This 207-nucleotide RNA was probed chemically with DMS and 2A3. The data come from the RNA Mapping Database (RMDB), library RNAMAK. For 2A3, 1,537 sequencing reads were counted. DMS adducts were read by reverse transcription with MarathonRT. The reactions ran in a buffer of 150 mM KOAc, 10 mM MgCl2 and 150 mM bicine (pH 8.5), at 24 C. High DMS reactivity at an A or C suggests that its Watson-Crick edge is free.

RNA sequence: GGGAACGACUCGAGUAGAGUCGAAAAGUCAUCCCCGCUUCGGCGGGGAUGACAAAAAGCGUACUACGAGGGUGAACUACACCGUUUCCCAAAUAGGAAACGUGGUGCACCUACCCACCGUAUCGCAAAAAUGAUGGUGGGUUCGCCCACCAUCAAAACAUCACUGGUAUUUCGAUACCAGUGAUGUAAAAGAAACAACAACAACAAC
Reactivity to DMS in 0.01 (KOAc 150mM, MgCl2 10mM, bicine 150mM(pH8.5), 24C), signal-to-noise 1, nucleotides 027 to 156: g000u020c000a000u010c000c010c000c010g070c030u000u010c190g050g080c020g030g040g000g010a010u000g000a020c000a000a060a070a150a200g010c040g030u000a100c110u000a000c010g000a120g010g010g030u010g060a170a120c000u000a040c010a060c300c010g010u000u000u000c000c010c030a030a150a180u000a040g070g000a000a000a010c000g000u000g030g030u000g000c000a030c070c040u010a040c010c000c000a300c060c010g000u000a040u000c070g050c010a020a140a080a060a150u000g000a020u000g000g010u000g000g000g000u000u000c100g040c000c000c000a030c000c000a000u010c020a010a030a150
Reactivity to 2A3 in 0.01 (KOAc 150mM, MgCl2 10mM, bicine 150mM(pH8.5), 24C), signal-to-noise 2, nucleotides 027 to 156: g020u000c000a010u010c020c010c100c000g000c010u050u060c120g100g030c000g000g000g010g010a000u020g000a000c000a000a000a000a000a000g020c010g050u050a010c060u000a010c020g000a020g010g010g000u040g010a110a050c040u150a040c100a020c050c040g010u000u000u000c020c010c070a130a300a140u300a060g000g000a010a000a000c010g080u080g050g000u030g030c000a050c000c010u090a120c030c010c010a060c030c030g000u000a050u270c030g000c090a010a040a040a000a090u100g000a010u000g010g010u000g000g000g010u000u020c060g030c000c030c010a000c000c030a000u040c000a000a020a000